[RMDB]
RNA sequence: GGGAACGACUCGAGUAGAGUCGAAAAGUUAAGGAUUGUUCAGGCAUUGGGCACUAGGAUAGGCAGUGGCUCAGAUUCCAGAAAGACUUAUCAGCAAUGAUGUGCUUGCGUUAGUUUCCAUCAGUGAGGGCAGGAUUGAGGUCAUAGUCACUGCCAACUAUUAAAAUGCUUUCGAGCAUUUUAAUAGAAAAGAAACAACAACAACAAC
Reactivity to DMS in 0.01 (KOAc 150mM, MgCl2 10mM, bicine 150mM(pH8.5), 24C), signal-to-noise 3, nucleotides 027 to 156: g020u000u000a070a090g030g010a120u010u010g010u010u000c030a110g020g020c050a130u000u000g000g020g020c040a060c040u000a120g030g010a130u000a110g020g010c020a060g030u010g020g020c020u000c100a120g010a120u000u010c050c030a110g010a130a140a100g020a050c040u000u000a060u000c040a100g020c060a060a080u000g010a080u000g020u000g020c030u010u000g010c080g020u000u000a090g010u000u000u000c030c010a120u000c050a090g020u000g000a060g010g020g010c050a100g000g040a150u000u000g010a070g010g000u000c040a120u000a060g010u000c010a030c000u000g000c010c010a020a070
Reactivity to 2A3 in 0.01 (KOAc 150mM, MgCl2 10mM, bicine 150mM(pH8.5), 24C), signal-to-noise 4, nucleotides 027 to 156: g030u080u090a040a050g020g040a120u060u100g030u040u080c040a020g030g010c060a060u020u100g030g000g020c030a020c100u070a080g090g050a110u110a120g020g030c010a000g000u010g010g000c000u010c020a030g020a060u130u110c030c010a030g090a030a070a010g040a030c030u110u090a070u120c030a010g050c030a030a140u050g020a040u060g050u070g050c020u040u060g020c020g050u050u090a070g030u030u090u030c040c020a050u040c030a030g050u020g090a070g000g020g000c020a030g010g020a050u050u120g040a050g010g030u020c010a020u060a030g000u010c000a000c020u020g000c010c000a000a000
Structure probing data (DMS and 2A3) for a 207-nucleotide construct. The 2A3 profile rests on 3,123 reads.